An RNA of 177 nucleotides, treated with 2A3 and DMS and read out base by base. The reactions ran in a buffer of 150 mM KOAc, 10 mM MgCl2 and 150 mM bicine (pH 8.5), at 24 C.

RNA sequence: GGGAACGACUCGAGUAGAGUCGAAAACCGAUUGGAUAUUGUGACGAACCUUGCAGAGUGAGUUCUAUUCAGCAAUGGAUAGUAUUUACGAAGUCAUGUAAAUCGUAAUAUCUAGAGGAAGGUGAAGCAUAACAAUCAUCUUCGGAUGAUUGUUAUGAAAAGAAACAACAACAACAAC
Reactivity to 2A3 in 0.01 (KOAc 150mM, MgCl2 10mM, bicine 150mM(pH8.5), 24C), signal-to-noise 4, nucleotides 027 to 126: c010c000g050a190u110u140g000g000a000u010a000u030u010g010u010g020a010c010g010a020a090c020c010u010u040g010c030a010g040a010g100u000g000a010g000u020u000c010u010a010u000u000c010a010g000c030a040a100u010g000g020a010u000a010g010u020a010u000u010u000a000c000g010a070a020g070u130c040a020u020g010u040a010a000a030u010c000g000u000a000a010u000a010u010c010u010a050g030a050g200g090a110a040g070g030u110g080a060a010g080
Reactivity to DMS in 0.01 (KOAc 150mM, MgCl2 10mM, bicine 150mM(pH8.5), 24C), signal-to-noise 8, nucleotides 027 to 126: c000c010g010a170u010u010g010g010a020u000a020u000u000g010u000g010a030c010g000a190a140c260c050u000u000g010c010a040g010a300g010u000g000a010g020u000u000c000u000a000u000u000c000a000g000c300a100a080u000g010g000a010u000a010g010u010a010u000u000u000a010c010g000a300a150g000u010c120a010u000g010u000a040a130a100u000c010g010u000a010a020u000a000u000c010u000a060g000a090g000g010a070a080g000g020u010g000a090a110g000
For 2A3, 12,790 sequencing reads were counted. 2A3 adducts were read by reverse transcription with SuperScript II with manganese. It was measured as part of the RMDB library RFMREP.